[RMDB]
RNA sequence: GGGAACGACUCGAGUAGAGUCGAAAAAAUCUGCCUUUGAACACGGACUCAGUCCCAUGGUCUGCAGUCAACACUCAGACACCGAUUACUUAGAGUCCGAGCUACUAGAUUUCAUACGUGUACGCAGUGAUAAGGCCAAACAACUUCUACACAGUGAGCAUGAGGAGGUAUUCGUACCUCCUCAUGCAAAAGAAACAACAACAACAAC
Reactivity to 2A3 in 0.01 (KOAc 150mM, MgCl2 10mM, bicine 150mM(pH8.5), 24C), signal-to-noise 2, nucleotides 027 to 156: a000a030u090c070u090g000c020c010u040u010u010g060a050a010c060a020c120g020g010a000c000u010c010a020g070u060c000c050c070a090u070g050g000u070c000u030g030c170a010g030u080c040a040a080c050a030c100u040c000a000g010a000c000a060c060c040g110a120u020u210a090c010u030u090a050g000a000g010u010c000c000g000a000g000c000u010a060c000u020a060g050a210u040u240u120c090a100u100a230c070g030u010g000u020a060c160g000c020a020g000u010g060a060u000a000a020g060g000c070c090a070a060a010c020a050a030c020u180u070c010u170a070c040a030c030a130g200u200g130a000
Chemical mapping of a 207-nucleotide RNA with 2A3. Conditions: 150 mM KOAc, 10 mM MgCl2 and 150 mM bicine (pH 8.5), 24 C.